[RMDB]
RNA sequence: GGGAACGACUCGAGUAGAGUCGAAAAUGAAUAUCGUAAGUGUCAUUUGAAUAUCAGUGUUGAACAACGUAUAAACGAUAAAAUUAAAUUUAGUUGGCCUUAUGAUGGUGGUUUUUGCGUGGGAUCCAUUAAUCAAGAAACAACCGUUAAGAUCAUGUAGUCUUAUGAAGUUCGCUUCAUAAGACUAAAAAGAAACAACAACAACAAC
Reactivity to DMS in 0.01 (KOAc 150mM, MgCl2 10mM, bicine 150mM(pH8.5), 24C), signal-to-noise 3, nucleotides 027 to 156: u010g030a120a130u000a050u010c030g030u000a040a060g040u000g040u010c030a070u010u000u010g040a060a100u010a120u010c090a140g030u000g010u000u000g000a090a180c020a090a140c060g030u000a160u000a070a080a090c030g010a110u000a070a050a060a120u000u010a030a050a120u000u000u000a060g020u000u000g020g010c000c010u000u000a040u000g010a040u010g020g030u000g010g020u000u000u000u000u020g020c070g060u010g000g020g020a010u000c020c010a060u000u010a050a090u000c060a050a080g020a080a080a070c050a060a100c090c040g000u000u000a060a130g010a110u000c060a080u010g020
Reactivity to 2A3 in 0.01 (KOAc 150mM, MgCl2 10mM, bicine 150mM(pH8.5), 24C), signal-to-noise 4, nucleotides 027 to 156: u110g020a030a030u100a000u060c010g010u040a010a050g040u040g020u150c020a060u060u120u200g100a070a020u130a040u160c090a080g060u050g030u130u100g030a060a020c020a050a010c080g080u120a090u110a190a080a020c010g060a060u130a110a100a040a020u190u170a090a030a060u120u100u080a040g040u030u010g010g000c000c010u010u020a010u050g040a010u040g030g040u040g010g040u020u030u050u050u060g060c060g000u050g000g030g010a040u010c010c000a000u000u050a060a100u040c040a060a000g010a070a090a020c040a030a030c020c010g030u060u060a050a020g030a110u090c000a010u080g010